[RMDB]
Chemical mapping of a 207-nucleotide RNA with 2A3. 2A3 adducts were read by reverse transcription with SuperScript II with manganese. The reactions ran in a buffer of 150 mM KOAc, 10 mM MgCl2 and 150 mM bicine (pH 8.5), at 24 C.
RNA sequence: GGGAACGACUCGAGUAGAGUCGAAAAGCAUCCGACAUGGUGCUGGGAUGCAAAUAUCAGCACAAGGCUUUUGCCGAAUUACACCAGAAGAACGCAUGGCUGGUGAAUCAUCCAUGCAUCGUCUCAUAGAGUCGACGAGACGCAAGAUGUCGACAGACGCGCUAAUAGGUUUCGACCUAUUAGCGCGAAAAGAAACAACAACAACAAC
Reactivity to 2A3 in 0.01 (KOAc 150mM, MgCl2 10mM, bicine 150mM(pH8.5), 24C), signal-to-noise 2, nucleotides 027 to 156: g040c000a020u060c040c040g070a080c150a120u100g070g010u000g010c050u060g040g010g000a030u080g060c020a040a090a000u110a050u080c000a000g070c040a000c060a150a110g050g000c060u110u100u200u150g090c040c020g030a060a030u180u100a080c050a030c050c000a010g010a060a030g070a140a070c060g060c040a030u020g030g010c010u020g000g030u020g070a000a100u110c010a020u010c020c000a020u070g010c000a000u050c050g000u000c000u000c000a040u050a130g010a010g060u030c000g020a000c050g020a060g010a030c010g020c000a000a050g060a090u120g010u030c010g020a000c010a020g070a010